[RMDB]
An RNA of 207 nucleotides, treated with 2A3 and read out base by base. 2A3 adducts were read by reverse transcription with SuperScript II with manganese.
RNA sequence: GGGAACGACUCGAGUAGAGUCGAAAAAGUGAGGCUUAACCUGGUGUGAAUAGAGGAUGAUUUGAGACGGGAAGAGUGAUCCUCUUAUCUCUAUUAGUUAAAGGAGAAAACUGGGCUCCUCAGAGAUUUCCUGACAAAUCAGCAAUGAAAUUGAAAAGCGUAAUCAUCCAUUCGUGGAUGAUUACGCAAAAGAAACAACAACAACAAC
Reactivity to 2A3 in 0.01 (KOAc 150mM, MgCl2 10mM, bicine 150mM(pH8.5), 24C), signal-to-noise 1, nucleotides 027 to 156: a000g100u050g010a000g000g010c030u180u020a050a050c000c010u000g000g000u010g020u060g000a170a070u080a110g010a010g000g020a020u060g050a050u080u140u070g140a180g020a100c140g010g000g130a010a010g000a010g030u010g040a020u010c030c000u010c030u000u110a090u020c000u000c010u000a230u240u100a090g090u050u210a220a080a000g000g000a010g000a000a250a010a000c040u000g000g000g030c000u010c000c020u000c000a000g000a000g000a020u040u000u020c000c000u010g040a000c130a020a110a020u110c030a010g010c000a000a170u130g050a060a130a120u090u030g040a150a090a000a000